[RMDB]
RNA sequence: GGGAACGACUCGAGUAGAGUCGAAAAGGAACACGGUAGGCCCUGGGGAAAGUGUUGCUGUAUUUGUAUUGACUGUCUUUGUAUUCAGAUCAAGAUUUUUAAAUCAUCAUUUCUCAGAGCGCACUAUUUCCCUCUAAGCAUCAACCAGUGUCAGAAAUCACCAGUAGGAUUUCGAUCCUACUGGUGAAAAAGAAACAACAACAACAAC
Reactivity to 2A3 in 0.01 (KOAc 150mM, MgCl2 10mM, bicine 150mM(pH8.5), 24C), signal-to-noise 3, nucleotides 027 to 156: g090g000a080a000c000a030c030g030g000u010a010g090g000c010c000c010u040g000g000g000g000a000a000a000g020u040g020u120u240g020c030u050g020u150a180u030u100u060g040u040a080u020u050g010a020c010u000g020u100c070u060u240u210g100u090a100u130u130c020a020g200a300u010c010a060a070g000a010u100u000u030u090u220a150a280a060u050c040a000u020c010a030u040u220u010c160u010c050a070g000a010g080c010g000c000a010c010u080a280u030u010u000c000c020c000u000c010u030a020a010g000c000a030u110c020a060a040c050c030a040g000u000g040u050c000a000g080a090a120a030
Reactivity to DMS in 0.01 (KOAc 150mM, MgCl2 10mM, bicine 150mM(pH8.5), 24C), signal-to-noise 1, nucleotides 027 to 156: g000g020a070a090c020a050c000g030g000u000a150g000g010c010c030c060u010g050g000g030g000a030a010a080g050u000g010u000u010g010c030u000g040u020a100u010u010u020g030u000a120u000u010g020a050c020u010g000u000c050u000u000u020g020u010a160u000u020c130a150g000a130u000c080a120a090g000a090u040u000u000u020u010a050a120a130u000c030a070u010c090a080u000u000u000c110u010c040a170g000a010g010c010g060c000a010c060u000a100u010u010u000c010c000c040u000c040u000a110a080g000c060a110u000c090a130a150c040c010a070g010u010g020u020c020a070g000a070a080a260